[RMDB]
RNA sequence: GGGAACGACUCGAGUAGAGUCGAAAAUGAAAGACAAGACUGUCGAUGGCUGCCUGAGCAUCACGGCAAACGUAUCCUUCCGGAUGCUGUCGUUGUCGUCGUGUGACUGUCUCUCGCACGUCACUGAUCAUGAUAUCAGGUUCGCCUGAUAUCAUGAAAAAGAAACAACAACAACAAC
Reactivity to DMS in 0.01 (KOAc 150mM, MgCl2 10mM, bicine 150mM(pH8.5), 24C), signal-to-noise 9, nucleotides 027 to 126: u010g000a070a070a080g010a030c030a050a060g010a080c080u000g010u000c030g010a070u000g010g020c050u000g010c020c070u000g000a050g010c030a030u000c050a100c020g000g010c210a030a060a070c150g010u000a060u000c070c050u000u010c140c120g000g000a020u000g010c010u010g020u000c180g010u000u000g010u000c020g010u000c040g010u010g010u000g000a080c070u000g010u000c040u000c040u000c050g020c100a070c130g000u000c070a070c070u000g010a180
Reactivity to 2A3 in 0.01 (KOAc 150mM, MgCl2 10mM, bicine 150mM(pH8.5), 24C), signal-to-noise 8, nucleotides 027 to 126: u140g010a020a020a020g040a010c030a030a040g050a060c060u070g030u160c030g060a100u030g030g000c030u020g020c010c030u080g050a020g020c010a010u040c020a020c040g010g000c030a100a040a020c100g050u080a080u080c020c000u110u070c040c040g000g010a010u010g010c040u100g160u080c090g030u030u040g030u030c010g020u010c030g020u040g020u030g090a050c030u040g030u070c000u000c010u010c040g020c020a050c100g050u040c020a010c080u070g010a070